Structure probing data (DMS) for a 177-nucleotide construct.
The reactions ran in a buffer of 150 mM KOAc, 10 mM MgCl2 and 150 mM bicine (pH 8.5), at 24 C.
For DMS the reverse transcriptase was MarathonRT.
[RMDB]
RNA sequence: GGGAACGACUCGAGUAGAGUCGAAAAGAUAUGGAUGGCGUAAUGUACGCUUACAGACAUGCUGAUGGGUCGGAAACGACCCUACCAGCAACAGCUGUACGGGCGUACAUUACGCCAUCCUAAGUCAUCAAUAAGCACUGUUCGCAGUGCUUAUUGAAAAAGAAACAACAACAACAAC
Reactivity to DMS in 0.01 (KOAc 150mM, MgCl2 10mM, bicine 150mM(pH8.5), 24C), signal-to-noise 8, nucleotides 027 to 126: g000a060u010a300u000g010g020a000u000g000g010c000g010u000a000a020u000g000u010a000c000g020c000u000u000a020c000a010g000a060c130a210u000g010c000u000g010a060u000g010g000g010u000c000g000g010a120a120a300c010g000a010c000c000c010u010a000c110c010a010g000c000a030a070c300a160g000c000u000g000u010a070c300g010g000g000c000g010u000a010c000a010u000u000a000c000g000c000c000a000u000c000c000u000a010a050g000u010c030a220
About this RNA:
The DMS profile rests on 9,788 reads.